[RMDB]
RNA sequence: GGGAACGACUCGAGUAGAGUCGAAAAGAUAUGGACCGUUGUAUGGAGCGAUAAGGUCGGAAACGACCUGGGUCGCUAUGAAGUACACCGGUCCUAAGUCAAAUCCACAGGCUUCGGCCUGUGGAAACACUACAAUCGUCUUCGGACGAUUGUAGUGAAAAGAAACAACAACAACAAC
Reactivity to DMS in 0.01 (KOAc 150mM, MgCl2 10mM, bicine 150mM(pH8.5), 24C), signal-to-noise 2, nucleotides 027 to 126: g020a020u000a240u000g000g010a000c000c000g000u010u000g000u000a000u000g000g010a090g060c010g000a000u000a300a010g000g030u000c000g000g000a040a080a110c010g010a040c000c000u000g000g000g000u000c010g030c030u010a070u000g040a140a220g000u000a000c010a000c090c010g000g000u000c000c010u000a000a040g020u000c030a090a180a140u000c000c000a000c000a000g010g010c000u000u000c300g070g010c000c000u020g010u000g000g000a020a040a140
Reactivity to 2A3 in 0.01 (KOAc 150mM, MgCl2 10mM, bicine 150mM(pH8.5), 24C), signal-to-noise 1, nucleotides 027 to 126: g040a010u060a040u050g000g010a020c010c030g000u000u060g060u000a020u060g110g150a240g130c020g010a010u020a070a030g000g060u000c040g000g040a090a090a040c020g000a010c020c010u030g030g300g010u020c000g020c010u040a220u180g020a030a030g000u000a000c010a020c000c030g000g000u050c000c000u000a000a010g000u000c000a000a000a120u040c010c010a000c000a000g000g040c010u090u250c300g160g000c030c000u020g000u010g010g000a010a010a000